[RMDB]
RNA sequence: GGGAACGACUCGAGUAGAGUCGAAAAAGUAGCGAUACGUCGCUACAAGAAAGCUUCAACAGCUCUGGGUUAGCUGACAAACUGAUUUUGGUGCUACAAAGUUCAGUAGGUGACCCUGAUUAAGAAAUUUGAUCUAUGACUUCGGUCAUAGAUCAAAAAAAGAAACAACAACAACAAC
Reactivity to 2A3 in 0.01 (KOAc 150mM, MgCl2 10mM, bicine 150mM(pH8.5), 24C), signal-to-noise 4, nucleotides 027 to 126: a000g000u000a000g010c000g000a000u020a070c270g020u030c000g030c000u000a000c000a010a000g050a010a110a000g000c040u090u110c110a130a080c030a130g030c010u020c030u040g050g000g000u040u040a090g050c000u030g020a040c070a080a110a010c000u000g020a040u000u000u050u010g080g040u200g130c040u100a090c010a000a030a070g050u010u070c010a010g000u020a020g020g030u020g020a010c000c000c030u030g050a090u050u230a080a020g090a060a050a010
Reactivity to DMS in 0.01 (KOAc 150mM, MgCl2 10mM, bicine 150mM(pH8.5), 24C), signal-to-noise 4, nucleotides 027 to 126: a160g010u000a000g000c010g050a050u000a020c160g050u000c000g020c000u000a000c010a080a110g000a080a100a070g010c020u000u000c160a100a180c210a120g000c020u010c040u000g010g000g000u000u010a070g000c040u000g000a150c210a060a140a060c010u010g000a020u020u000u010u020g000g010u010g010c190u030a090c000a010a020a050g010u010u010c000a020g020u000a090g010g010u010g000a020c020c000c000u000g000a070u030u010a070a080g000a100a100a090

Description:
An RNA of 177 nucleotides, treated with 2A3 and DMS and read out base by base. For DMS the reverse transcriptase was MarathonRT. The RNA was probed in 150 mM KOAc, 10 mM MgCl2 and 150 mM bicine (pH 8.5) at 24 C.